Chemical mapping of a 207-nucleotide RNA with DMS and 2A3.
2A3 adducts were read by reverse transcription with SuperScript II with manganese.

[RMDB]
RNA sequence: GGGAACGACUCGAGUAGAGUCGAAAACAGAGCUGAUGGGCCAUGUACCUAUCCAAAAUGAGAUCCCGUCUUGCACACUGUGCUAAUUUGAGAUUCUCAUGCCUCCUACUUGGAGAGAUCUGGACUACUAACUGUAUGACGUUCGCGUCAUACAGAACCUGCAAUACUAGUUCGCUAGUAUUGCAGGAAAAGAAACAACAACAACAAC
Reactivity to DMS in 0.01 (KOAc 150mM, MgCl2 10mM, bicine 150mM(pH8.5), 24C), signal-to-noise 3, nucleotides 027 to 156: c030a060g010a090g000c020u010g010a030u000g030g050g060c030c040a120u020g020u020a040c030c010u010a020u010c020c060a070a070a130a050u000g020a040g020a060u000c000c010c010g000u010c090u000u000g020c010a060c030a190c140u010g000u010g030c030u000a030a060u010u000u010g010a050g000a030u000u010c010u010c000a050u010g010c030c010u000c000c010u000a160c200u000u010g020g010a030g000a060g000a020u000c020u000g010g020a160c030u000a150c210u000a060a200c000u000g010u000a000u010g010a020c010g050u000u000c300g010c030g040u000c000a010u000a000c000a000g010a020a070
Reactivity to 2A3 in 0.01 (KOAc 150mM, MgCl2 10mM, bicine 150mM(pH8.5), 24C), signal-to-noise 9, nucleotides 027 to 156: c010a010g030a010g020c080u090g020a030u030g010g010g010c070c090a150u160g050u160a120c010c000u030a020u030c030c030a050a080a000a110u040g000a020g000a020u010c010c010c010g020u020c060u060u070g000c010a020c030a070c160u230g010u010g020c040u080a090a140u080u070u150g080a080g010a040u230u030c020u000c010a010u050g030c000c010u000c000c010u120a270c090u120u220g000g010a010g000a010g010a030u010c010u050g030g040a040c030u070a040c020u060a300a060c000u020g000u000a000u000g000a000c000g010u020u020c120g010c000g090u010c000a000u000a000c000a000g000a000a010